The record gives the reactivity of an RNA of 177 nucleotides to DMS and 2A3. Conditions: 150 mM KOAc, 10 mM MgCl2 and 150 mM bicine (pH 8.5), 24 C.

RNA sequence: GGGAACGACUCGAGUAGAGUCGAAAAGAAAGUAGCGACUUACUAACCGGUAAGGACGGAAAAAGAAGCGUAAACAUACCGCGAAAGUAUGAGGCUAAGAUAGGCCGAACUAUCAAGCUACGAAAAAGGGUAUACUUGAGUUCGCUCAAGUAUACCCAAAAGAAACAACAACAACAAC
Reactivity to DMS in 0.01 (KOAc 150mM, MgCl2 10mM, bicine 150mM(pH8.5), 24C), signal-to-noise 4, nucleotides 027 to 126: g020a060a110a090g000u000a010g000c000g000a250c030u010u000a000c010u000a050a300c300c010g000g010u010a020a050g000g020a060c040g010g000a040a060a090a100a050g000a060a080g030c010g000u000a060a040a130c040a030u000a020c000c000g000c080g010a120a130a030g000u010a000u000g000a150g000g000c010u010a100a060g000a040u010a040g000g000c030c050g000a090a110c110u020a050u000c080a050a150g000c040u000a000c000g030a030a060a080a120a080
Reactivity to 2A3 in 0.01 (KOAc 150mM, MgCl2 10mM, bicine 150mM(pH8.5), 24C), signal-to-noise 2, nucleotides 027 to 126: g120a030a120a000g010u010a000g000c000g040a040c060u010u000a020c010u000a070a010c000c000g000g050u050a040a020g100g200a050c040g040g090a160a060a000a000a000g230a060a010g140c000g000u010a000a040a000c020a070u040a020c030c000g010c040g070a090a000a000g100u110a030u040g090a070g090g010c050u120a140a000g070a160u090a000g120g000c160c070g000a000a040c000u030a000u090c000a020a040g000c000u000a000c100g050a070a000a030a020a000